[RMDB]
RNA sequence: GGGAACGACUCGAGUAGAGUCGAAAAGAUAUGGACGCUUGUGGUAGCUGCGUGGUUGUCAGUCGGAUUUCCAACGGAAUUAUAACUCGGAAACGAGUUAUAAUUCGGUUGGCCGGUCGACUUGGAUUUACCACGCCGAAACAAGCGUCCUAAGUCACGGGCAUUAAAUCUUCGGAUUUAAUGCCCGAAAAGAAACAACAACAACAAC
Reactivity to 2A3 in 0.01 (KOAc 150mM, MgCl2 10mM, bicine 150mM(pH8.5), 24C), signal-to-noise 1, nucleotides 027 to 156: g030a020u060a020u210g000g000a010c010g000c000u020u040g020u050g000g040u210a060g060c180u120g010c030g000u000g010g020u030u020g000u020c000a010g000u000c030g090g060a070u140u130u000c000c000a000a000c050g210g000a010a010u000u000a000u000a000a010c000u000c000g030g060a060a060a030c010g030a000g000u000u000a000u000a000a000u000u000c010g000g000u000u000g000g000c040c020g150g000u020c000g000a000c010u040u180g220g000a020u100u100u190a040c000c000a020c010g000c000c000g010a020a030a010c000a000a000g000c000g000u000c000c000u000a000a000g000u000c000a010